Structure probing data (DMS and 2A3) for a 177-nucleotide construct. Values are in units of 0.01, from 0 to 300, in steps of 10. 2A3 adducts were read by reverse transcription with SuperScript II with manganese. It was measured as part of the RMDB library M2PK50. The 2A3 profile rests on 5,913 reads.
[RMDB]
RNA sequence: GGGAACGACUCGAGUAGAGUCGAAAACUUCCAGCGUUCGCGCUGGAAGAAAGGCCGAGUAGUGUUGGCUCGCGAAAGGCCAUAAAUCAACAAUCACUCAGAAAAUCGGUAUCUUCGGAUACCGAAACAAUAUCUAGACGUUCGCGUCUAGAUAUUGAAAAGAAACAACAACAACAAC
Reactivity to DMS in 0.01 (KOAc 150mM, MgCl2 10mM, bicine 150mM(pH8.5), 24C), signal-to-noise 4, nucleotides 027 to 126: c010u000u010c000c000a020g010c000g030u010u010c220g020c020g040c000u010g000g000a010a010g010a050a070a090g010g020c000c020g010a060g010u000a100g000u000g020u000u010g010g000c150u010c000g020c010g030a130a150a150g000g000c010c000a080u000a010a060a090u010c110a100a080c130a090a050u020c160a090c100u010c070a120g010a070a030a100a100u000c000g010g000u000a000u000c000u000u010c130g040g000a020u000a000c000c010g000a000a010a080
Reactivity to 2A3 in 0.01 (KOAc 150mM, MgCl2 10mM, bicine 150mM(pH8.5), 24C), signal-to-noise 4, nucleotides 027 to 126: c000u000u000c000c000a000g000c000g040u060u060c140g020c000g000c110u000g010g000a000a000g000a020a020a000g010g000c000c000g000a000g000u010a010g010u020g050u110u160g170g050c120u060c030g000c000g010a020a000a010g000g030c000c010a010u020a000a040a010u080c040a010a100c020a030a080u170c050a040c130u110c060a040g170a140a120a030a110u040c010g000g000u000a010u000c010u010u060c190g080g010a000u000a000c000c010g000a010a000a000